[RMDB]
RNA sequence: GGGAACGACUCGAGUAGAGUCGAAAAGAUAUGGAGCUGAGAGCCAACACAACGCACAGGAACUGUGUAUCGGAAACGAUACACUAAGUACUGUGAACUACGUUGGUUGGCUCUCAGCUCCUAAGUCGUUGAGUGUAAACUUCGGUUUACACUCAACAAAAGAAACAACAACAACAAC
Reactivity to DMS in 0.01 (KOAc 150mM, MgCl2 10mM, bicine 150mM(pH8.5), 24C), signal-to-noise 2, nucleotides 027 to 126: g000a080u000a300u000g000g000a010g040c000u000g000a010g020a020g020c000c000a010a010c000a120c000a010a000c000g060c020a000c000a030g000g000a190a170c280u000g000u000g000u000a000u000c010g000g000a220a150a170c000g010a000u020a000c000a000c000u020a010a020g030u000a140c020u020g010u000g000a060a140c180u000a290c050g000u000u000g000g010u000u000g000g000c000u020c010u000c000a000g000c010u010c000c000u000a010a080g000u010c070

This 177-nucleotide RNA was probed chemically with DMS. The data come from the RNA Mapping Database (RMDB), library TTRINS.